[RMDB]
RNA sequence: GGGAACGACUCGAGUAGAGUCGAAAAAGCGCUCAGCCGGCCCAAUUUCGUCCGCCACAUCCUCUACAGCCUCAGUCCAUUCCUCGCUAUUGGUGUCCGGCGCUGAGGUCUUCCAGUUAUCGUACUUGGUAGCCAUGUUGCCUCUCCUAUGUGGGCAAAAGAGAUCCUAUUUCGAUAGGAUCUCUUUAAAAGAAACAACAACAACAAC
Reactivity to DMS in 0.01 (KOAc 150mM, MgCl2 10mM, bicine 150mM(pH8.5), 24C), signal-to-noise 2, nucleotides 027 to 156: a070g010c050g020c000u010c020a240g020c000c010g030g010c020c010c000a030a130u000u000u000c050g000u000c010c020g000c000c020a100c040a090u010c020c020u010c050u010a080c030a090g020c050c000u000c030a100g020u000c030c030a170u010u000c020c030u000c070g040c030u010a100u000u050g000g030u000g000u010c030c020g020g040c030g020c030u010g010a030g040g010u000c040u000u000c040c050a080g010u040u010a040u010c070g040u000a070c090u000u000g030g010u000a040g010c040c030a130u010g000u010u010g020c010c010u000c030u010c020c040u010a080u000g020u000g010g030g010c090a050
Reactivity to 2A3 in 0.01 (KOAc 150mM, MgCl2 10mM, bicine 150mM(pH8.5), 24C), signal-to-noise 2, nucleotides 027 to 156: a000g040c060g000c010u030c070a010g040c010c030g020g000c000c000c020a010a030u080u090u150c060g000u020c070c080g020c010c000a070c000a070u080c020c060u050c020u090a060c050a030g020c000c010u040c030a050g030u050c040c000a080u090u060c010c010u070c030g030c050u060a060u060u120g000g020u020g040u050c030c040g000g000c050g000c030u020g010a000g040g000u030c070u040u000c010c010a040g000u080u070a100u100c060g010u030a050c040u080u070g030g000u020a020g030c050c000a070u160g030u040u070g060c000c010u080c030u070c060c010u040a050u180g040u130g040g020g050c030a090